[RMDB]
RNA sequence: GGGAACGACUCGAGUAGAGUCGAAAAGCUGCGGGCGGAUUCACCCCCGACCUUGGCAACGAUGUCCUUGAACCGCUGCCGGUCCUCGCCGCGCUGAAUGGCUUCGAAAUCGGCACCGAUCAGCUCGGUACGGGUACGCGUUCGCGCGUACCCGUACAAAAGAAACAACAACAACAAC
Reactivity to 2A3 in 0.01 (KOAc 150mM, MgCl2 10mM, bicine 150mM(pH8.5), 24C), signal-to-noise 1, nucleotides 027 to 126: g010c030u040g010c030g040g010g020c010g000g010a020u100u120c090a130c000c000c000c000c010g080a070c070c000u000u110g000g000c000a000a020c050g100a220u040g040u000c060c100u000u110g070a070a020c000c040g100c000u040g000c000c000g040g000u020c030c020u120c110g000c010c020g010c010g000c080u030g000a050a050u160g030g000c000u130u050c050g110a050a030a050u000c000g030g000c020a000c070c000g000a020u050c020a000g030c000u030c060g030
Conditions: 150 mM KOAc, 10 mM MgCl2 and 150 mM bicine (pH 8.5), 24 C. The record gives the reactivity of an RNA of 177 nucleotides to 2A3. For 2A3, 580 sequencing reads were counted. Reactivities are given for positions 27 through 126. For 2A3 the reverse transcriptase was SuperScript II with manganese.